[RMDB]
RNA sequence: GGGAACGACUCGAGUAGAGUCGAAAAAAUACGAGACGUCUGCACCGCACAUGUCUCAGGAAGAGAUCGUCCGUAGUAGCAAGCUGCUGGAGGGUAUCUCGGUCAGCAUCUCGAUUGGCAAGACGUCCAAACACAGAUUCUUCGGAAUCUGUGUUUGAAAAGAAACAACAACAACAAC
Reactivity to 2A3 in 0.01 (KOAc 150mM, MgCl2 10mM, bicine 150mM(pH8.5), 24C), signal-to-noise 1, nucleotides 027 to 126: a010a010u180a010c050g010a020g010a040c010g030u000c010u000g000c060a050c060c060g020c000a050c000a090u050g060u010c000u000c020a030g070g040a070a070g030a000g000a000u020c040g070u000c120c000g020u060a020g010u010a040g120c060a100a040g000c010u000g000c040u140g020g040a010g030g080g030u070a060u000c000u000c030g010g000u060c040a020g000c010a010u010c030u020c010g120a150u050u170g060g020c040a060a050g020a030c000g010u000c010
Reactivity to DMS in 0.01 (KOAc 150mM, MgCl2 10mM, bicine 150mM(pH8.5), 24C), signal-to-noise 3, nucleotides 027 to 126: a120a050u000a080c080g000a140g020a030c010g010u000c030u000g030c100a100c140c020g030c170a060c080a050u000g000u020c010u010c080a100g000g010a090a070g000a000g010a020u000c040g020u000c000c000g010u000a020g010u010a110g010c180a110a160g000c010u000g000c000u010g020g010a040g010g020g000u010a020u000c010u000c000g010g010u000c070a030g000c020a010u000c030u000c010g020a090u020u020g030g010c010a100a030g010a050c060g010u000c020
Source: RMDB library RFMREP, as collected in RNAgym. Structure probing data (2A3 and DMS) for a 177-nucleotide construct. The DMS profile rests on 2,497 reads. The 2A3 profile rests on 1,523 reads. Values cover nucleotides 27 to 126.